[RMDB]
RNA sequence: GGGAACGACUCGAGUAGAGUCGAAAAACGCCACACGGGGUAAGAGCUGAACGCAUCUAAGCUCGAAACCCACUUGGAAAAGAGACACCGCCGAGGUCCCGCGUACAAGACGCGGUCGAUAGACUCGGGGUGUGCGCGUCGAGGUAACGAGACGUUAGUUAGAUAUUAACUUCGGUUAAUAUCUAACAAAAGAAACAACAACAACAAC
Reactivity to 2A3 in 0.01 (KOAc 150mM, MgCl2 10mM, bicine 150mM(pH8.5), 24C), signal-to-noise 2, nucleotides 027 to 156: a000c000g050c020c000a050c020a040c100g000g010g000g000u020a050a020g020a000g000c010u020g010a160a030c120g020c110a020u060c050u110a070a010g000c000u000c000g010a040a020a000c000c000c000a030c020u010u020g030g030a040a090a000a110g060a020g040a020c010a000c000c080g280c020c000g020a010g000g050u040c010c000c000g000c000g010u090a150c130a190a140g110a060c020g000c000g000g030u060c050g020a010u040a120g110a050c000u000c000g000g000g000g000u010g000u020g020c020g000c010g000u010c020g000a020g020g010u050a110a010c010g000a020g010a040c010g010u000u000a010
Reactivity to DMS in 0.01 (KOAc 150mM, MgCl2 10mM, bicine 150mM(pH8.5), 24C), signal-to-noise 2, nucleotides 027 to 156: a070c000g000c010c020a030c070a070c130g020g050g000g010u000a060a250g000a030g020c010u010g010a180a210c080g030c160a100u000c040u000a200a080g000c000u000c000g000a060a120a300c030c000c010a110c110u000u000g000g020a090a060a090a190g010a160g000a050c030a020c020c000g010c020c020g000a060g000g020u000c050c000c010g010c020g030u020a150c210a120a170g000a100c010g040c000g020g010u010c060g020a140u010a080g020a150c020u000c000g060g010g000g030u000g000u000g000c030g000c010g000u010c030g000a230g210g000u010a110a110c060g010a220g020a040c040g020u000u000a150